[RMDB]
RNA sequence: GGGAACGACUCGAGUAGAGUCGAAAACCACUUUGCGCUAAUGGUCUUGUAUUCGGCUUAUACAAGAAUAUGUGCACAGGUAGUCCUUCUAUAGUUGAAUUUAAUAGGUUGGCUACCUGUGACUGGACUCUGUCAUUGGGUUCGCCCAAUGACAGAGAAAAGAAACAACAACAACAAC
Reactivity to 2A3 in 0.01 (KOAc 150mM, MgCl2 10mM, bicine 150mM(pH8.5), 24C), signal-to-noise 1, nucleotides 027 to 126: c020c000a030c030u050u060u050g010c010g000c030u080a050a040u190g080g020u000c000u000u030g000u020a020u010u030c020g180g000c230u150u040a050u000a030c020a000a030g050a060a010u130a040u080g080u060g020c000a020c010a020g000g000u020a000g000u020c000c000u030u030c020u010a060u020a070g090u100u170g140a220a210u070u170u140a230a110u020a000g040g000u000u000g020g020c000u000a010c020c020u030g000u020g000a000c000u020g000g000a010